[RMDB]
RNA sequence: GGGAACGACUCGAGUAGAGUCGAAAAGAACAGAGGCAGUCUUAGCGACGGACGUCACUUCCUUCUUGUUACUUAAAUUGCUGGGGGGCUCCCAACACCUGGACUUUUGGCACCACGAGGUCAACACACAUUGCUCUAGUUUCGACUAGAGCAAUGUAAAAGAAACAACAACAACAAC
Reactivity to DMS in 0.01 (KOAc 150mM, MgCl2 10mM, bicine 150mM(pH8.5), 24C), signal-to-noise 4, nucleotides 027 to 126: g000a070a080c110a060g010a060g010g020c070a050g000u000c050u000u020a090g030c070g020a050c050g020g020a070c060g000u000c040a040c030u010u020c030c020u010u000c090u000u020g010u000u000a080c090u020u020a020a080a070u000u000g000c050u000g010g020g020g000g010g020c080u000c000c010c010a070a080c090a070c040c000u010g000g010a140c100u000u000u000u000g010g020c020a050c020c030a070c100g000a080g000g020u000c060a050a050c140a080c180
Reactivity to 2A3 in 0.01 (KOAc 150mM, MgCl2 10mM, bicine 150mM(pH8.5), 24C), signal-to-noise 7, nucleotides 027 to 126: g070a020a020c060a030g040a050g060g000c030a020g030u020c030u080u110a040g040c030g070a030c040g030g060a030c030g040u040c020a010c050u050u060c010c000u030u120c030u070u100g050u060u030a060c010u040u080a030a100a140u150u150g010c040u040g000g000g000g000g040g000c000u020c000c000c000a020a030c020a010c010c010u020g030g030a060c010u040u080u050u090g030g020c010a010c040c000a040c070g040a040g010g040u050c050a080a010c030a010c000
This 177-nucleotide RNA was probed chemically with DMS and 2A3.
For DMS the reverse transcriptase was MarathonRT.
It was measured as part of the RMDB libraries RFM100 and RFMREP.
For 2A3 the reverse transcriptase was SuperScript II with manganese.